[RMDB]
RNA sequence: GGGAACGACUCGAGUAGAGUCGAAAAGAGCACUGAAGUUGCCUCAAAGAAUUAAGGGGUGUCCACACCAGCCUCUGGGGGUCUUUGGUGUUAGUCUUCCAGGUAGAGCUGGUUUUACAAGUAGGUGGCCAUCUACAGGAUGUGAUGUGAGCGAUGCCCUUUGCUUUCUAUUCGUAGAAAGCAAAGGAAAAGAAACAACAACAACAAC
Reactivity to 2A3 in 0.01 (KOAc 150mM, MgCl2 10mM, bicine 150mM(pH8.5), 24C), signal-to-noise 1, nucleotides 027 to 156: g010a000g000c040a010c050u060g060a040a010g060u100u090g060c000c000u000c050a160a100a060g050a170a220u210u130a240a030g000g000g000g000u020g010u010c020c000a020c020a010c030c000a000g060c000c000u020c000u000g020g000g000g000g000u000c020u050u000u200g040g000u030g020u040u010a010g000u010c040u000u020c000c020a020g010g090u100a010g000a070g100c010u000g000g000u010u020u070u140a040c060a060a020g020u020a010g200g000u010g050g000c050c010a000u010c000u010a060c000a070g000g020a010u000g050u020g020a040u030g020u020g010a020g010c020g010a020u040g020c030
Reactivity to DMS in 0.01 (KOAc 150mM, MgCl2 10mM, bicine 150mM(pH8.5), 24C), signal-to-noise 1, nucleotides 027 to 156: g020a110g040c030a070c020u010g010a090a260g020u000u010g020c020c020u030c020a100a090a140g000a100a190u000u010a090a130g000g000g020g020u000g010u010c050c040a110c080a080c050c000a140g040c030c040u000c010u000g010g030g020g020g040u020c030u000u000u010g020g000u000g000u000u000a070g020u000c010u000u010c020c020a070g030g010u000a170g010a140g060c000u010g010g050u000u000u010u010a070c090a060a150g010u000a060g010g020u000g010g050c060c050a060u010c020u020a090c060a150g020g020a130u000g010u010g010a140u010g000u010g000a090g020c020g000a070u010g010c050

Structure probing data (2A3 and DMS) for a 207-nucleotide construct. The RNA was probed in 150 mM KOAc, 10 mM MgCl2 and 150 mM bicine (pH 8.5) at 24 C. Source: RMDB library OK3TST, as collected in RNAgym. Reactivities are given for positions 27 through 156. For DMS, 1,786 sequencing reads were counted. In probing experiments dimethyl sulfate is read out at A N1 and C N3, which are open when not base-paired.